[RMDB]
RNA sequence: GGGAACGACUCGAGUAGAGUCGAAAAUCAAAUAAAGCGCACCAAUAUGGAGGUGCGCAACCAGCGUGUCCAAGGAUCUCGCAUCCACGCGUCUACCAAGACGCGAAAGGUAUUACAAAUAAAAAAAUCGAAGAUACUGAUUCGUCAGUAUCUUCGAAAAAGAAACAACAACAACAAC
Reactivity to 2A3 in 0.01 (KOAc 150mM, MgCl2 10mM, bicine 150mM(pH8.5), 24C), signal-to-noise 2, nucleotides 027 to 126: u030c000a050a020a030u170a060a190a030g020c010g000c010a020c000c000a100a060u220a260u300g130g080a090g060g000u000g000c000g000c020a000a010c000c000a010g010c030g030u050g050u020c020c010a080a080g090g020a060u050c030u060c100g020c030a030u020c010c000a030c020g000c000g000u000c000u030a130c040c060a040a000g010a000c000g000c010g030a030a010a010g000g000u020a020u000u090a070c060a030a040a080u270a100a130a020a020a000a010a040
Reactivity to DMS in 0.01 (KOAc 150mM, MgCl2 10mM, bicine 150mM(pH8.5), 24C), signal-to-noise 2, nucleotides 027 to 126: u020c110a080a050a100u020a100a210a180g010c010g010c020a020c000c000a150a150u000a120u010g010g000a230g000g010u000g030c000g030c000a030a040c060c110a080g000c010g010u000g020u000c030c120a140a140g000g000a080u000c020u000c080g040c090a160u000c020c010a300c030g000c000g030u000c000u000a180c300c300a070a060g000a000c000g020c000g010a030a050a050g000g020u010a070u030u020a090c100a040a080a050u050a000a000a090a040a140a040a100